[RMDB]
RNA sequence: GGGAACGACUCGAGUAGAGUCGAAAAUGGCAGUCGGUGAGGGCGGCGGUGAGUUGGUAAAACAGCUGCUUAAUGACACCUGGGAUAUCGACUAUCCGGGCGUGGUUGCGGUGCAUCUGACCGGAAAACAAUUUACUCGAUUCGUCGAGUAAAUUGUAAAAGAAACAACAACAACAAC
Reactivity to 2A3 in 0.01 (KOAc 150mM, MgCl2 10mM, bicine 150mM(pH8.5), 24C), signal-to-noise 3, nucleotides 027 to 126: u060g040g020c010a010g010u030c020g060g030u070g060a090g020g020g020c030g020g000c000g030g010u070g030a060g000u040u080g040g010u090a050a030a020a050c030a020g010c020u040g000c010u080u150a110a030u200g060a020c000a020c020c010u030g060g000g020a040u050a010u140c050g060a050c030u040a030u050c010c020g040g020g000c040g020u050g050g010u030u070g020c020g030g030u080g000c020a070u020c040u010g060a060c020c000g030g020a030a080a010
Reactivity to DMS in 0.01 (KOAc 150mM, MgCl2 10mM, bicine 150mM(pH8.5), 24C), signal-to-noise 6, nucleotides 027 to 126: u010g010g010c060a060g010u000c060g020g020u010g010a100g010g010g020c060g010g010c070g010g010u000g000a060g010u000u000g000g020u000a060a060a120a150c060a160g000c070u010g000c020u000u000a060a110u010g010a140c070a060c070c000u000g010g010g010a190u000a050u000c130g010a070c130u000a100u010c010c020g000g000g010c050g020u000g010g000u010u000g000c060g020g010u000g000c060a040u010c060u010g000a100c030c020g010g000a060a080a100

Overview
Chemical mapping of a 177-nucleotide RNA with 2A3 and DMS. For 2A3, 3,818 sequencing reads were counted. DMS adducts were read by reverse transcription with MarathonRT. For 2A3 the reverse transcriptase was SuperScript II with manganese. The RNA was probed in 150 mM KOAc, 10 mM MgCl2 and 150 mM bicine (pH 8.5) at 24 C.